[RMDB]
RNA sequence: GGGAACGACUCGAGUAGAGUCGAAAACGAGCGUUACGGCGUGUCGAUCAACGAGGCAGCCGUGCAGGCGAAAAUGGCCGAAAUGGGCCUGACCGGCCUGACCGGCGAGGCCGAGAAGAACGCGAAGCGGCUUUCUUAUUUUCGAAUAAGAAAGCCGAAAAGAAACAACAACAACAAC
Reactivity to DMS in 0.01 (KOAc 150mM, MgCl2 10mM, bicine 150mM(pH8.5), 24C), signal-to-noise 8, nucleotides 027 to 126: c050g000a260g000c010g010u000u000a070c050g010g010c010g020u010g020u010c020g020a140u010c110a070a250c080g010a240g000g020c010a220g010c000c000g010u000g010c020a030g000g010c000g000a030a050a110a100u010g010g010c000c010g010a070a130a120u010g010g010g020c000c000u010g000a120c210c120g000g000c000c010u010g000a040c030c000g000g010c000g000a070g020g010c000c000g000a180g010a080a160g000a020a050c020g010c030g000a110a120g010
Reactivity to 2A3 in 0.01 (KOAc 150mM, MgCl2 10mM, bicine 150mM(pH8.5), 24C), signal-to-noise 3, nucleotides 027 to 126: c010g010a030g020c010g010u040u040a030c040g030g000c030g030u060g100u050c030g030a130u080c050a070a110c030g010a050g010g000c020a020g000c000c000g000u040g000c000a000g000g000c010g070a070a010a020a100u120g000g000c020c010g080a200a150a180u280g070g020g010c000c000u010g020a050c030c060g170g040c010c010u030g030a120c010c010g000g010c020g010a090g080g000c000c010g010a010g000a020a010g030a010a000c010g010c010g020a040a010g090